Record summary:
Structure probing data (2A3) for a 207-nucleotide construct. The 2A3 profile rests on 535 reads. Conditions: 150 mM KOAc, 10 mM MgCl2 and 150 mM bicine (pH 8.5), 24 C. Values are in units of 0.01, from 0 to 300, in steps of 10. It was measured as part of the RMDB library RSTRND.
RNA sequence: GGGAACGACUCGAGUAGAGUCGAAAAAAACUAAAAUAAACGCUAACGAAGAUAAUUACGCUUUAGCUGCUGCCUAAUAUAGGCAGCCCGUCAGUCCAGGGUUCCUGCGCCUUGGGUAGCUGGCGUCAUUAAGUCAGGCCUUUUGAGUGGGAAGGUUCACUUAAAUGUCGUUCGCGACAUUUAAGUGAAAAGAAACAACAACAACAAC
Reactivity to 2A3 in 0.01 (KOAc 150mM, MgCl2 10mM, bicine 150mM(pH8.5), 24C), signal-to-noise 1, nucleotides 027 to 156: a020a000a030c130u210a070a030a030a040u100a050a110a000c030g010c030u030a020a020c030g070a010a020g000a140u130a260a070u260u080a080c050g000c120u030u080u050a010g020c020u040g000c000u000g000c010c000u140a300a140u200a070u010a190g000g000c000a000g000c000c000c000g000u000c000a050g080u170c000c000a020g000g030g000u100u000c000c000u010g000c000g000c000c000u010u010g000g000g000u030a010g000c000u000g000g020c000g050u080c030a040u090u190a000a030g070u150c000a010g000g000c000c000u020u010u000u070g070a030g030u150g000g040g000a000a000g000g000u060u050